[RMDB]
RNA sequence: GGGAACGACUCGAGUAGAGUCGAAAACCCUCAGAAUGAGGUCUUGUGAAUAGAGCUGAUCAGAUGUUAUCAUGAUCUAUCUCUUGCAGGGCAUUUUGCUACAGCAAGAACAUACAAGCUUAUAGCUUGCAAAUACUUUUAGCCAAGAAUGAGAGAAGAUUUAUAGGCGAUUCGUCGCCUAUAAAUCAAAAGAAACAACAACAACAAC
Reactivity to 2A3 in 0.01 (KOAc 150mM, MgCl2 10mM, bicine 150mM(pH8.5), 24C), signal-to-noise 7, nucleotides 027 to 156: c010c010c010u010c030a170g060a120a150u110g030a050g090g040u000c010u040u030g020u030g090a140a130u100a150g010a020g030c050u030g010a010u000c000a020g050a090u070g120u300u170a120u150c110a180u090g010a000u000c020u030a070u030c010u030c000u010u050g020c030a040g040g000g000c050a050u070u140u130u120g000c000u040a110c020a050g050c020a070a020g030a080a010c030a020u140a040c020a030a010g000c020u140u220a100u160a260g000c000u010u030g020c030a020a080a060u100a090c020u050u060u130u160a020g010c030c010a040a060g090a120a090u160g010a040g010a010g010a240a030
Reactivity to DMS in 0.01 (KOAc 150mM, MgCl2 10mM, bicine 150mM(pH8.5), 24C), signal-to-noise 2, nucleotides 027 to 156: c010c000c020u010c040a090g010a130a090u010g020a090g050g040u000c020u000u000g010u010g000a080a150u010a070g020a050g010c060u000g020a040u000c000a050g000a180u010g030u000u030a090u000c090a120u000g010a040u000c010u010a060u010c040u000c010u000u000g000c020a120g020g030g000c020a110u010u000u000u000g030c010u000a080c190a110g030c000a080a060g010a040a120c120a190u000a040c000a000a020g050c000u000u000a150u030a120g000c000u000u000g010c020a050a070a170u000a070c050u000u000u000u020a110g020c000c080a010a100g010a060a080u000g000a170g000a140g020a110a180
The record gives the reactivity of an RNA of 207 nucleotides to 2A3 and DMS. The reactions ran in a buffer of 150 mM KOAc, 10 mM MgCl2 and 150 mM bicine (pH 8.5), at 24 C. Reactivities are given for positions 27 through 156. It was measured as part of the RMDB library OK3TST.